RNA sequence: GGGAACGACUCGAGUAGAGUCGAAAACGGUCAGCCGCGACGGGCACGACGGGGAGGACCUGGGCAAUUUGUUCGGCGCGCUGGACGCACUGCGGAUUCCGAUUGCCUAUCUGGCCGAGCUGUUCACGUGAGUAAUCGUAUUCGUACGAUUACUCACAAAAGAAACAACAACAACAAC
Reactivity to DMS in 0.01 (KOAc 150mM, MgCl2 10mM, bicine 150mM(pH8.5), 24C), signal-to-noise 3, nucleotides 027 to 126: c070g030g000u010c020a060g020c070c040g000c060g000a040c060g000g000g000c080a100c130g000a090c030g030g000g010g010a140g000g010a160c020c000u010g000g000g050c060a050a070u020u020u000g000u000u000c000g010g030c050g050c050g000c010u040g010g020a130c050g010c060a050c040u010g000c040g000g000a140u010u000c060c040g010a050u000u030g000c010c020u010a060u020c030u020g000g000c000c000g000a070g020c020u010g010u000u000c010a110c180
Reactivity to 2A3 in 0.01 (KOAc 150mM, MgCl2 10mM, bicine 150mM(pH8.5), 24C), signal-to-noise 8, nucleotides 027 to 126: c020g010g040u030c010a020g050c030c030g040c020g040a060c010g010g010g010c050a020c060g080a020c010g010g010g020g020a090g040g070a040c000c010u030g000g020g010c030a070a130u070u030u100g040u050u050c020g030g000c000g000c010g000c030u050g050g040a030c020g010c020a080c040u130g030c030g050g020a070u110u020c020c000g040a050u010u080g010c000c000u080a090u100c060u050g050g000c000c010g010a020g000c030u030g030u060u060c060a050c140